[RMDB]
RNA sequence: GGGAACGACUCGAGUAGAGUCGAAAAUUGGUCUGAUCAAACCAUAUGCUACAAGGAUAGUGUGUUUUAUGUUGUAAAGAAUAGUACAGCUUUUCCAUUUGAAACACUUUCAGCAUGUCGUGCGUAUUACCCGUGUUGUUCGCAACACGGAAAAGAAACAACAACAACAAC
Reactivity to DMS in 0.01 (KOAc 150mM, MgCl2 10mM, bicine 150mM(pH8.5), 24C), signal-to-noise 7, nucleotides 027 to 129: u040u030g030g020u010c050u000g000a100u070c140a140a140a080c050c040a080u030a060u050g030c070u010a080c140a020a030g000g000a080u020a060g050u040g020u000g030u010u010u020u020a040u050g000u020u020g020u000a030a060a030g020a000a040u030a050g000u000a090c180a030g030c040u000u000u000u000c000c000a000u060u020u030g020a090a070a040c070a040c070u020u010u040c060a060g020c080a010u010g030u010c120g020u030g000c070g020u000a060u020u050a080c080
Reactivity to 2A3 in 0.01 (KOAc 150mM, MgCl2 10mM, bicine 150mM(pH8.5), 24C), signal-to-noise 8, nucleotides 027 to 129: u050u040g050g010u000c050u060g050a110u100c050a070a020a020c020c010a040u040a030u130g020c020u010a070c050a150a110g110g000a090u110a120g130u060g030u010g040u050u040u020u040a100u050g110u150u020g020u070a020a030a020g060a110a060u070a120g100u090a070c030a030g060c000u050u000u040u000c020c020a080u070u040u170g040a030a040a010c040a000c000u000u040u060c020a020g010c010a030u020g020u050c040g040u040g050c040g000u060a060u080u090a060c000